[RMDB]
RNA sequence: GGGAACGACUCGAGUAGAGUCGAAAACUGAAUCCGGAGCAACAGGAGUUUGGAAUCAGGGCGCACUUGUUCCAUUCGUCCUGAACCUAAUCAACGACGCAUCGGAAAACGAGGAGGUUACCGUAAACAGGACUCGUAUAUUCGUAUACGAGUCCUGAAAAGAAACAACAACAACAAC
Reactivity to 2A3 in 0.01 (KOAc 150mM, MgCl2 10mM, bicine 150mM(pH8.5), 24C), signal-to-noise 2, nucleotides 027 to 126: c020u020g000a040a020u000c050c020g050g020a030g020c030a000a130c010a050g000g030a040g060u070u060u070g020g010a060a040u110c010a020g000g040g050c110g010c090a070c030u070u150g040u110u060c020c000a020u030u040c010g070u040c020c000u000g030a030a040c000c010u060a060a090u130c000a010a060c030g100a010c070g030c030a040u080c040g010g000a080a100a060a000c070g010a020g050g000a020g110g040u030u070a030c000c030g100u170a050a050a090
Reactivity to DMS in 0.01 (KOAc 150mM, MgCl2 10mM, bicine 150mM(pH8.5), 24C), signal-to-noise 3, nucleotides 027 to 126: c050u000g000a190a160u040c030c000g010g010a070g030c040a110a270c090a090g020g030a140g010u000u000u020g010g010a080a060u020c110a010g010g000g040c190g020c200a040c070u000u000g000u000u000c020c030a130u000u000c010g010u000c000c000u000g000a030a100c090c080u000a070a060u010c110a030a150c160g020a070c220g010c040a040u010c040g000g000a060a070a150a140c110g000a070g000g010a160g010g040u000u000a090c020c020g000u020a040a140a200

Conditions: 150 mM KOAc, 10 mM MgCl2 and 150 mM bicine (pH 8.5), 24 C.
The record gives the reactivity of an RNA of 177 nucleotides to 2A3 and DMS.
DMS adducts were read by reverse transcription with MarathonRT.
The DMS profile rests on 1,554 reads.
It was measured as part of the RMDB library OK2TST.